[RMDB]
RNA sequence: GGGAACGACUCGAGUAGAGUCGAAAAGAUAUGGAACGUUUCAACGCAUCUACCCACCAAGGCCAUCGGAAACGAUGGCUUGAGGAUGUAUCAACGUUCCUAAGUCAAAGCCGACUUCGGUCGGCAAGGGGAAUAUAGGGUUCGCCCUAUAUUCCCCAAAAGAAACAACAACAACAAC
Reactivity to DMS in 0.01 (KOAc 150mM, MgCl2 10mM, bicine 150mM(pH8.5), 24C), signal-to-noise 3, nucleotides 027 to 126: g000a050u010a300u010g000g000a010a020c010g030u010u000u000c200a140a040c210g000c010a020u000c020u000a150c090c090c130a300c150c070a080a010g010g010c000c000a010u000c000g000g000a160a050a150c010g010a000u000g000g030c000u000u000g000a050g030g000a020u000g010u000a050u000c200a000a030c000g000u000u000c000c000u000a030a040g010u000c090a110a140a170g020c020c010g010a010c000u010u020c230g030g020u000c000g010g000c000a030a030
Reactivity to 2A3 in 0.01 (KOAc 150mM, MgCl2 10mM, bicine 150mM(pH8.5), 24C), signal-to-noise 1, nucleotides 027 to 126: g070a040u070a080u160g000g030a010a000c000g040u000u060u090c160a080a030c110g010c010a020u050c020u100a170c140c030c060a010c020c030a040a030g300g300c000c000a050u020c000g000g050a000a040a070c010g000a010u000g010g000c050u010u000g000a000g000g000a000u000g000u010a040u090c060a040a000c010g000u000u020c020c000u060a160a000g050u050c070a070a120a060g020c010c010g000a000c000u030u090c300g160g000u020c060g030g010c000a000a000